[RMDB]
RNA sequence: GGGAACGACUCGAGUAGAGUCGAAAACAAUCAUCUCCGAGAGGGAAGCUGUCGCUGCUGAUUGCGUGCGUGGGUCGGAUGAAUUCUCCAUGUGGUCUAUUGUGCAUGGCUCUUAGGGAUGGAGCCACAAUGAGCACGGGUUCGCCCGUGCUCAUUGAAAAGAAACAACAACAACAAC
Reactivity to 2A3 in 0.01 (KOAc 150mM, MgCl2 10mM, bicine 150mM(pH8.5), 24C), signal-to-noise 1, nucleotides 027 to 126: c030a010a080u110c020a020u010c060u050c000c040g070a060g010a020g130g000g010a060a010g010c050u030g010u060c000g020c020u060g010c010u050g040a160u070u120g040c070g000u040g000c100g030u060g040g010g040u050c020g020g020a040u030g020a050a120u100u000c020u040c040c010a050u080g040u160g050g020u000c000u070a130u030u180g010u010g050c040a050u030g000g000c000u030c000u020u150a110g070g050g020a050u060g010g000a020g000c000c000a010
Reactivity to DMS in 0.01 (KOAc 150mM, MgCl2 10mM, bicine 150mM(pH8.5), 24C), signal-to-noise 1, nucleotides 027 to 126: c100a180a120u010c050a030u000c020u000c020c030g010a090g000a080g010g000g010a100a120g000c030u000g010u010c030g000c020u010g000c030u000g010a090u010u020g010c100g000u010g030c070g020u000g000g000g020u020c050g000g010a090u000g000a060a140u000u000c060u010c030c050a110u000g020u010g030g010u010c040u010a120u000u010g000u000g010c090a090u000g010g000c010u000c010u000u000a140g030g010g020a080u000g000g020a020g010c030c000a050
Chemical mapping of a 177-nucleotide RNA with 2A3 and DMS.
2A3 adducts were read by reverse transcription with SuperScript II with manganese.
Values cover nucleotides 27 to 126.
The data come from the RNA Mapping Database (RMDB), library OK2TST.
The RNA was probed in 150 mM KOAc, 10 mM MgCl2 and 150 mM bicine (pH 8.5) at 24 C.